An RNA of 170 nucleotides, treated with DMS and 2A3 and read out base by base. Values are in units of 0.01, from 0 to 300, in steps of 10. High DMS reactivity at an A or C suggests that its Watson-Crick edge is free. The RNA was probed in 150 mM KOAc, 10 mM MgCl2 and 150 mM bicine (pH 8.5) at 24 C.

RNA sequence: GGGAACGACUCGAGUAGAGUCGAAAAUCAUACCGUGCUUGCAAAGGCUGAGUUAUGCUGUUCUGCACGCAUGGUUUGGAGAGAGUGGUGCAAUGUCUGUGGCAUAAAAGAUGUUGUUCUACAAGGCGGCGACUAACCUUCGGGUUAGUCAAAAGAAACAACAACAACAAC
Reactivity to DMS in 0.01 (KOAc 150mM, MgCl2 10mM, bicine 150mM(pH8.5), 24C), signal-to-noise 6, nucleotides 027 to 129: u040c040a040u000a040c030c000g000u010g030c020u020u020g000c010a020a090a260g000g030c000u000g040a220g050u040u030a050u050g000c020u030g020u060u030c140u000g030c020a010c010g010c020a000u010g000g020u020u040u000g030g020a110g020a090g000a010g000u020g040g000u000g030c020a000a000u000g010u000c020u010g020u010g000g000c030a060u030a040a080a070a080g010a030u020g020u030u010g020u000u020c020u040a100c100a070a030g030g000c040g000g000c150
Reactivity to 2A3 in 0.01 (KOAc 150mM, MgCl2 10mM, bicine 150mM(pH8.5), 24C), signal-to-noise 9, nucleotides 027 to 129: u100c000a020u020a020c000c000g000u010g000c010u010u000g000c000a040a070a070g020g000c010u080g080a140g300u300u190a180u300g020c010u040g130u220u060c060u040g000c010a000c020g000c010a010u010g010g000u020u030u050g040g000a060g010a000g010a000g010u010g020g030u030g000c010a000a010u010g050u040c060u030g010u090g000g000c020a010u110a130a140a020a020g060a050u070g000u020u000g000u010u020c020u050a080c040a100a030g120g020c040g050g010c060